[RMDB]
RNA sequence: GGGAACGACUCGAGUAGAGUCGAAAACUCUUGUUAGGUGAAAGUUGAUGGUCGCCGUGUCAGUCAAUGCCUUUGAAAACAGUUCUAUGUAGUAGGGAGUCGAGAACCUAUGAGAGUUAGAACUUGCUAUGCCUUGGACUCUUCGGAGUCCAAGGAAGUUUUUGAUAUUGUUCGCAAUAUCAAAAACAAAAGAAACAACAACAACAAC
Reactivity to 2A3 in 0.01 (KOAc 150mM, MgCl2 10mM, bicine 150mM(pH8.5), 24C), signal-to-noise 3, nucleotides 027 to 156: c010u000c030u030u080g110u050u090a040g000g030u060g070a140a090a070g030u060u050g030a070u050g020g030u070c030g000c060c030g020u030g000u010c010a010g040u030c020a010a080u090g010c000c030u100u100u210g110a080a070a020a020c040a010g010u010u040c030u030a040u090g020u030a050g000u010a010g020g030g040a040g040u050c020g030a020g020a200a040c010c000u020a020u070g050a050g000a000g070u040u030a020g000a010a010c000u010u060g000c020u080a070u180g010c000c000u000u000g000g010a000c010u000c000u020u040c160g080g010a010g000u000c000c000a000a000g000g000a000a000
Reactivity to DMS in 0.01 (KOAc 150mM, MgCl2 10mM, bicine 150mM(pH8.5), 24C), signal-to-noise 4, nucleotides 027 to 156: c020u000c030u010u000g010u000u000a060g010g020u000g010a080a080a130g020u000u000g020a080u010g020g020u000c020g050c030c030g030u000g030u000c030a100g000u010c060a050a060u000g010c020c030u010u010u000g010a080a080a080a060c030a050g020u010u000c010u000a060u000g010u000a260g020u000a040g010g010g020a130g010u000c100g010a230g010a130a100c000c010u010a020u000g010a260g020a160g010u000u000a040g000a030a050c030u000u000g030c010u000a090u000g020c000c000u000u000g010g000a040c000u000c000u000u000c300g040g000a010g030u010c000c000a000a000g010g020a010a010